Chemical mapping of a 207-nucleotide RNA with 2A3 and DMS. The reactions ran in a buffer of 150 mM KOAc, 10 mM MgCl2 and 150 mM bicine (pH 8.5), at 24 C. The DMS profile rests on 1,693 reads.
[RMDB]
RNA sequence: GGGAACGACUCGAGUAGAGUCGAAAAGAAAGAUGAAGAAAUGAUGAACCGAGAACUUCCUACCAGCAGUGAUCCUUGCAUCCCAGGAAGAAGGCUCCCUAACCAGAAAGAAGACCUCCAUCAUUGCCAGAAAAGAUACACAGAGAGCCACCGCCCACGAUAUUAAAUCAUUCGUGAUUUAAUAUCGAAAAGAAACAACAACAACAAC
Reactivity to 2A3 in 0.01 (KOAc 150mM, MgCl2 10mM, bicine 150mM(pH8.5), 24C), signal-to-noise 2, nucleotides 027 to 156: g070a020a080a000g030a030u110g040a040a050g050a100a120a050u120g030a030u040g030a050a030c060c050g010a010g010a070a010c020u040u010c020c010u050a110c090c030a000g040c000a010g020u020g060a070u030c010c000u040u100g030c010a070u060c000c000c010a010g010g010a010a040g010a010a030g030g000c010u010c000c000c000u040a060a070c030c030a030g050a090a100a010g060a030a020g070a070c030c000u020c040c000a040u050c010a050u020u160g020c010c000a010g080a030a060a000a000g060a000u090a060c070a000c030a040g060a000g010a010g080c000c040a020c000c020g000c000c010c000a020
Reactivity to DMS in 0.01 (KOAc 150mM, MgCl2 10mM, bicine 150mM(pH8.5), 24C), signal-to-noise 1, nucleotides 027 to 156: g000a110a050a120g050a180u030g000a150a110g000a120a090a150u000g020a050u030g020a040a100c050c030g010a250g040a060a150c130u000u010c040c040u010a160c050c050a070g040c070a100g010u000g000a070u010c040c030u000u010g000c010a170u000c040c020c050a140g040g000a060a110g040a090a100g030g000c030u020c020c010c020u000a050a150c110c020a100g000a150a040a110g000a100a080g000a070c000c020u000c010c000a060u020c040a120u000u010g020c000c030a150g010a040a060a050a100g030a210u020a080c050a000c050a060g000a070g020a110g020c000c000a070c050c040g000c000c010c040a230
The 2A3 profile rests on 1,190 reads. The data come from the RNA Mapping Database (RMDB), library OK3TST.